Source: RMDB library OK2TST, as collected in RNAgym. An RNA of 177 nucleotides, treated with DMS and 2A3 and read out base by base. The reactions ran in a buffer of 150 mM KOAc, 10 mM MgCl2 and 150 mM bicine (pH 8.5), at 24 C.

RNA sequence: GGGAACGACUCGAGUAGAGUCGAAAAAUGGUUAUACGGUAUGGGAACCAAAGGAUAUUCAGACGCGAAUGCCUGUUCUGAAGCCAUUUAUCGAUAUGGUAAAGAAAUAUGGCACUCCAUACGUCGGCCACCCUCAAAAAUUCGUUUUUGAGGGUGGAAAAGAAACAACAACAACAAC
Reactivity to DMS in 0.01 (KOAc 150mM, MgCl2 10mM, bicine 150mM(pH8.5), 24C), signal-to-noise 3, nucleotides 027 to 126: a110u010g000g000u000u000a060u000a140c060g010g030u000a050u000g000g000g010a080a060c020c020a050a080a090g010g000a120u000a070u000u000c060a140g000a030c080g020c130g010a050a020u000g000c020c040u000g020u000u000c010u010g010a160a150g000c000c000a040u000u000u000a130u020c260g010a110u000a040u000g000g020u000a020a300a030g000a020a040a050u010a050u000g010g020c010a030c090u000c010c120a070u010a190c030g000u000c070g000g010
Reactivity to 2A3 in 0.01 (KOAc 150mM, MgCl2 10mM, bicine 150mM(pH8.5), 24C), signal-to-noise 3, nucleotides 027 to 126: a000u070g020g000u090u040a130u040a200c050g020g070u120a070u110g060g000g020a040a020c010c000a050a060a050g130g010a100u040a100u160u130c060a060g040a080c010g070c040g070a110a000u060g010c020c020u010g000u000u030c000u030g040a060a050g020c000c000a050u160u170u110a280u250c130g050a070u040a020u270g020g000u050a030a070a000g060a010a030a040u150a180u100g000g000c020a000c030u000c010c010a020u030a090c030g030u010c000g080g000